Structure probing data (2A3 and DMS) for a 207-nucleotide construct. Conditions: 150 mM KOAc, 10 mM MgCl2 and 150 mM bicine (pH 8.5), 24 C. 2A3 adducts were read by reverse transcription with SuperScript II with manganese. For DMS the reverse transcriptase was MarathonRT. It was measured as part of the RMDB library M2RFPK. The DMS profile rests on 4,240 reads.
RNA sequence: GGGAACGACUCGAGUAGAGUCGAAAAGGGACUGGCCCGAUGAAGCCCGGCAACCUAACUUUAUUUAAGCGUAAAGUGAACGUGCUAAUUCCAGCAAAAUGGUGUAUUCCGUUUUGGUAGAUAAGAGAAGCGUGACAUGAGUUCGCUCAUGUCACAACUGGAUGAUAAACUUCGGUUUAUCAUCCAGAAAAGAAACAACAACAACAAC
Reactivity to 2A3 in 0.01 (KOAc 150mM, MgCl2 10mM, bicine 150mM(pH8.5), 24C), signal-to-noise 5, nucleotides 027 to 156: g020g000g020a010c020u020g060g020c010c010c010g010a050u100g060a040a010g020c000c020c000g010g010c020a070a040c010c000u050a020a010c020u000u030u040a060u080u170u140a190a050g100c030g030u000a010a010a020g020u030g040a030a010c020g010u020g000c000u020a080a100u160u010c020c010a000g040c030a080a000a000a020u050g020g010u070g040u210a130u180u070c010c010g020u010u000u020u030g050g020u070a110g050a190u160a200a130g090a010g050a150a010g090c060g060u000g000a000c000a000u000g000a000g030u050u070c170g020c070u000c000a000u000g000u000c000a000c000a000a000
Reactivity to DMS in 0.01 (KOAc 150mM, MgCl2 10mM, bicine 150mM(pH8.5), 24C), signal-to-noise 2, nucleotides 027 to 156: g000g000g020a120c010u000g010g010c070c030c030g020a200u000g000a120a120g000c020c000c050g020g020c020a050a050c000c010u000a110a090c010u030u000u010a040u010u000u010a140a190g000c200g030u000a040a030a050g010u000g000a070a100c080g020u010g000c030u040a080a190u010u000c000c000a080g000c020a030a000a020a020u000g010g030u010g000u010a090u010u000c000c010g070u000u000u000u000g010g000u000a000g000a050u000a030a070g010a120g000a090a120g010c120g040u000g000a030c010a010u000g010a010g010u000u000c300g010c010u020c000a000u000g000u000c020a000c000a030a070